An RNA of 177 nucleotides, treated with 2A3 and DMS and read out base by base.
The DMS profile rests on 5,958 reads.
The RNA was probed in 150 mM KOAc, 10 mM MgCl2 and 150 mM bicine (pH 8.5) at 24 C.

RNA sequence: GGGAACGACUCGAGUAGAGUCGAAAAAGAAAUAGCGAUUCUCGAAGGAGUUGAGUCCUUCGAGGAUUGCUAAGCAAAGAUGCUGAACUAUCAAUGAACGACUUUGCUCAUCUUUGUAUACAAAAAAGUUAAUAAUGAGUUUCGACUCAUUAUUAACAAAAGAAACAACAACAACAAC
Reactivity to 2A3 in 0.01 (KOAc 150mM, MgCl2 10mM, bicine 150mM(pH8.5), 24C), signal-to-noise 2, nucleotides 027 to 126: a000g090a000a060a040u050a010g000c000g000a010u000u000c000u000c000g000a000a000g020g020a010g030u180u170g180a070g150u020c000c000u000u000c000g000a000g000g000a000u000u000g000c000u010a020a000g000c000a010a010a000g020a020u030g020c140u050g040a090a060c040u060a080u250c060a090a170u200g080a110a050c080g080a040c090u100u100u090g010c000u020c010a020u010c020u040u040u030g040u040a160u030a130c080a030a110a020a060a030a040
Reactivity to DMS in 0.01 (KOAc 150mM, MgCl2 10mM, bicine 150mM(pH8.5), 24C), signal-to-noise 5, nucleotides 027 to 126: a070g000a070a100a180u000a010g010c000g010a000u000u000c000u000c000g000a020a010g010g010a040g010u000u010g010a270g010u000c000c000u000u000c000g000a010g000g000a000u000u000g010c000u000a020a070g010c010a010a020a030g010a030u010g010c160u000g000a070a090c120u000a120u000c060a080a140u010g010a130a140c160g010a050c040u000u000u000g010c030u000c110a030u000c010u000u000u000g010u010a080u010a060c070a010a040a060a050a070a090
DMS adducts were read by reverse transcription with MarathonRT.